[RMDB]
RNA sequence: GGGAACGACUCGAGUAGAGUCGAAAAGCUGCCUGUAGCCAUGGGAUCUCCAACUGCAUGCCAGAGUAAUGGAGAGACUUUGACAGCUCAGGUCAGCACAGUGCCUGCAGCUGCCACUCAUCUUUCCAACAAAACUUCCUUUCGAGGAAGUUUUGUUAAAAGAAACAACAACAACAAC
Reactivity to 2A3 in 0.01 (KOAc 150mM, MgCl2 10mM, bicine 150mM(pH8.5), 24C), signal-to-noise 7, nucleotides 027 to 126: g000c000u010g000c000c000u070g180u280a010g000c020c010a050u070g010g010g020a050u000c000u000c000c010a060a080c020u030g030c060a230u210g070c110c010a040g010a020g050u110a180a110u070g000g000a010g000a000g010a040c020u040u010u060g060a070c100a030g000c000u000c010a010g020g060u120c040a000g010c000a000c030a010g090u100g030c000c010u020g020c020a010g010c000u030g010c000c010a040c020u050c010a100u030c030u030u020u000c040c020
Reactivity to DMS in 0.01 (KOAc 150mM, MgCl2 10mM, bicine 150mM(pH8.5), 24C), signal-to-noise 3, nucleotides 027 to 126: g000c020u010g010c020c000u000g010u070a020g010c010c010a090u010g020g000g020a170u000c010u030c000c000a030a150c050u010g010c040a120u020g030c160c060a080g000a150g010u000a080a080u000g000g000a010g000a010g010a090c050u000u000u010g000a110c140a130g000c040u000c010a000g000g000u030c010a050g010c070a070c110a040g010u010g020c000c010u010g000c060a060g010c000u000g000c030c010a130c080u010c070a070u000c010u000u000u010c100c060
Source: RMDB libraries RFM100 and RFMREP, as collected in RNAgym.
The record gives the reactivity of an RNA of 177 nucleotides to 2A3 and DMS.
DMS adducts were read by reverse transcription with MarathonRT.
Values are in units of 0.01, from 0 to 300, in steps of 10.